[RMDB]
Source: RMDB library OK1LIB, as collected in RNAgym. Structure probing data (2A3 and DMS) for a 177-nucleotide construct. Reactivities are given for positions 27 through 126. For 2A3 the reverse transcriptase was SuperScript II with manganese. The reactions ran in a buffer of 150 mM KOAc, 10 mM MgCl2 and 150 mM bicine (pH 8.5), at 24 C.
RNA sequence: GGGAACGACUCGAGUAGAGUCGAAAACGAUGACGCUAGUGCACUAGCAGAGGUCCUUCUAGACGACCGCGAGCCUAGUAUAACGGAGCGUUGAUAGAGCAUGUGCAUCAAUGCUGGACACAGGCGGAGAUGUAUUGUCGUUCGCGAUAAUGCAUCUAAAAGAAACAACAACAACAAC
Reactivity to 2A3 in 0.01 (KOAc 150mM, MgCl2 10mM, bicine 150mM(pH8.5), 24C), signal-to-noise 9, nucleotides 027 to 126: c060g110a150u220g080a020c030g000c020u030a030g020u030g060c080a040c110u010a010g000c010a010g030a020g030g010u010c010c000u060u050c040u060a040g010a080c040g010a010c010c020g010c020g020a030g010c000c010u040a030g030u070a070u060a090a030c070g040g020a070g030c000g000u000u020g040a070u050a040g110a010g020c070a060u130g060u140g060c010a010u020c010a020a040u030g000c010u020g020g010a010c020a000c000a030g030g000c010g010g030
Reactivity to DMS in 0.01 (KOAc 150mM, MgCl2 10mM, bicine 150mM(pH8.5), 24C), signal-to-noise 9, nucleotides 027 to 126: c070g000a110u040g010a080c040g010c000u010a090g010u010g000c140a050c010u000a020g010c010a110g010a200g000g010u000c010c110u010u030c130u020a100g010a090c220g000a040c010c010g010c050g000a120g000c120c020u010a040g000u010a060u030a110a080c080g000g020a070g010c010g010u000u010g000a110u010a050g000a080g000c080a070u020g010u020g020c080a040u010c030a050a070u010g000c020u000g000g010a190c070a040c050a210g000g000c030g000g000